Chemical mapping of a 177-nucleotide RNA with DMS and 2A3.
The reactions ran in a buffer of 150 mM KOAc, 10 mM MgCl2 and 150 mM bicine (pH 8.5), at 24 C.
[RMDB]
RNA sequence: GGGAACGACUCGAGUAGAGUCGAAAAAGUAUCGGGUUCGCCCGAUACUGUUGGGGCGCGGCCUUUGUCCUGUCGCGCGUAUAUUGCGCGCGAUAUACGCGCAUGUGGGGUCGUUCGCGACCCCAAACAACUGGUAAGUAUUCGUACUUACCAGUUGAAAAGAAACAACAACAACAAC
Reactivity to DMS in 0.01 (KOAc 150mM, MgCl2 10mM, bicine 150mM(pH8.5), 24C), signal-to-noise 5, nucleotides 027 to 126: a020g010u000a000u000c000g000g000g010u000u010c230g010c000c000c000g010a010u000a000c000u000g000u000u000g000g000g000g000c020g010c030g010g000c050c040u000u000u000g000u000c010c010u000g010u000c060g000c000g020c000g010u000a030u010a070u000u010g010c020g010c060g010c000g000a010u000a020u000a030c010g010c010g020c020a110u010g020u010g020g010g010g020u000c020g020u010u010c150g010c010g010a040c000c000c000c000a000a030a110
Reactivity to 2A3 in 0.01 (KOAc 150mM, MgCl2 10mM, bicine 150mM(pH8.5), 24C), signal-to-noise 3, nucleotides 027 to 126: a000g010u000a010u000c000g010g020g020u060u060c200g060c030c000c000g000a000u000a000c000u000g030u010u090g010g010g010g020c030g010c010g050g180c010c030u070u060u090g040u030c000c010u050g080u120c050g000c000g010c020g040u000a120u020a030u080u190g030c050g000c020g000c010g020a000u000a010u010a020c010g040c010g080c040a030u130g070u100g090g010g000g000u020c010g030u040u050c090g010c010g060a100c010c000c000c020a010a000a010